[RMDB]
RNA sequence: GGGAACGACUCGAGUAGAGUCGAAAAGAAAGAAAAACCUAACAGAUGCGAGACCAUGGUAUGUGGAAAUAAAAGCCACCCGGUUUUUAUCUUUCCACACCAAAAGAUCCACAUCUCCCGAGGUGAAAAAACGCUAAUGUUUCGACAUUAGCGUUUUAAAAGAAACAACAACAACAAC
Reactivity to 2A3 in 0.01 (KOAc 150mM, MgCl2 10mM, bicine 150mM(pH8.5), 24C), signal-to-noise 3, nucleotides 027 to 126: g020a010a070a020g110a020a070a040a030a020c020c000u050a090a020c030a050g020a010u030g020c030g040a160g010a160c000c020a060u020g020g000u120a090u220g020u000g000g020a000a000a020u000a010a000a020a000g010c010c010a050c170c150c110g000g000u000u000u000u000u020a020u010c080u020u070u000c000c000a000c000a000c000c000a010a000a000a030g010a080u000c010c000a000c000a020u000c010u040c000c000c000g040a010g010g000u030g030a160a050
Reactivity to DMS in 0.01 (KOAc 150mM, MgCl2 10mM, bicine 150mM(pH8.5), 24C), signal-to-noise 3, nucleotides 027 to 126: g020a080a130a130g000a030a060a060a100a060c010c010u000a090a130c220a020g010a000u000g030c060g010a120g000a010c000c020a150u000g000g040u010a090u010g000u000g000g010a000a030a020u000a000a000a000a010g000c000c000a100c300c300c300g000g030u000u000u010u000u010a020u030c150u030u010u000c000c000a000c030a030c010c010a010a060a110a090g000a070u010c000c000a070c010a010u000c010u000c000c000c000g020a040g000g000u000g020a000a060